Chemical mapping of a 207-nucleotide RNA with 2A3 and DMS.

RNA sequence: GGGAACGACUCGAGUAGAGUCGAAAAUCGAGGAUUCGUCCUCGAAAAAACCGUAGGAAUCCGAAGAGCGAUGAGCGUCGUAACAUCUGUCUUCGAAAGAGGACAGUGGACGCGAGCUCCGGAUUCCUAAACGGAAAAAACACCAUUCGUGGUGUAAAUGUUAGUUAUCCUUCGGGAUAACUAACAUAAAAGAAACAACAACAACAAC
Reactivity to 2A3 in 0.01 (KOAc 150mM, MgCl2 10mM, bicine 150mM(pH8.5), 24C), signal-to-noise 4, nucleotides 027 to 156: u040c000g000a000g030g000a020u040u080c230g090u050c060c000u020c040g000a000a010a000a000a000a010c000c000g000u010a030g010g000a000a010u000c020c010g090a300a130g000a060g020c050g190a290u180g130a100g060c000g010u000c010g000u130a060a050c040a220u190c010u000g000u000c000u000u000c000g110a110a060a060g000a000g000g000a010c010a000g000u010g000g010a000c010g010c010g010a020g000c000u000c000c000g000g000a000u000u000c000c000u000a000a000a000c000g020g080a100a040a020a000a030a000c020a000c030c010a020u040u070c230g130u090g030g000u020g030u030a070a180
Reactivity to DMS in 0.01 (KOAc 150mM, MgCl2 10mM, bicine 150mM(pH8.5), 24C), signal-to-noise 1, nucleotides 027 to 156: u000c010g020a090g020g020a050u000u010c220g020u020c000c020u020c000g010a000a020a040a070a070a050c020c000g000u000a040g000g000a050a000u000c000c010g000a060a100g010a060g020c030g000a220u020g020a300g030c000g000u000c020g030u010a100a110c060a160u010c000u000g000u010c000u000u020c000g000a100a100a260g000a050g040g010a020c000a000g020u010g000g020a030c000g010c010g000a050g000c010u000c020c000g030g000a000u000u000c010c010u010a000a010a000c030g020g000a000a050a080a100a090a030c000a020c000c000a080u010u000c230g010u030g010g060u000g000u000a020a090
DMS adducts were read by reverse transcription with MarathonRT.
The DMS profile rests on 3,470 reads.
DMS (dimethyl sulfate) methylates the pairing face of unpaired adenines and cytosines.
Source: RMDB library RNAMAK, as collected in RNAgym.